[RMDB]
RNA sequence: GGGAACGACUCGAGUAGAGUCGAAAAACGGGCCAGGUCCAGCGCCUGCGGAACAGUAUUCAGAUCAUCGCGCACCAGAAUGAUGUCGGCUGCACCGAGCGCGACGUCGGUGCCACGCCCGAUCGCCCAUUCCCGUCCCCUUCGGGGGACGGGAAUGAAAAGAAACAACAACAACAAC
Reactivity to 2A3 in 0.01 (KOAc 150mM, MgCl2 10mM, bicine 150mM(pH8.5), 24C), signal-to-noise 3, nucleotides 027 to 126: a010c020g020g000g020c000c000a030g030g040u010c020c030a050g040c010g020c060c000u020g010c020g030g030a050a050c020a080g090u090a090u170u120c030a040g020a090u110c020a020u060c060g000c010g000c040a020c030c040a040g110a140a080u240g050a050u050g060u100c000g030g000c000u070g030c110a120c080c060g060a030g030c190g000c010g170a050c060g030u010c010g010g000u000g000c030c010a020c010g010c010c040c000g000a020u070c090g090c010c020
Reactivity to DMS in 0.01 (KOAc 150mM, MgCl2 10mM, bicine 150mM(pH8.5), 24C), signal-to-noise 2, nucleotides 027 to 126: a100c040g000g000g010c010c020a120g000g060u000c070c160a040g030c130g020c000c030u000g000c020g000g000a100a080c100a050g000u000a050u020u020c070a140g000a090u010c060a090u040c030g000c220g000c000a090c060c080a300g000a080a070u020g020a050u050g040u000c070g070g000c010u020g000c140a050c080c130g000a040g010c000g020c010g020a020c170g060u000c010g000g000u000g000c010c070a090c050g000c000c000c060g000a140u010c010g020c000c010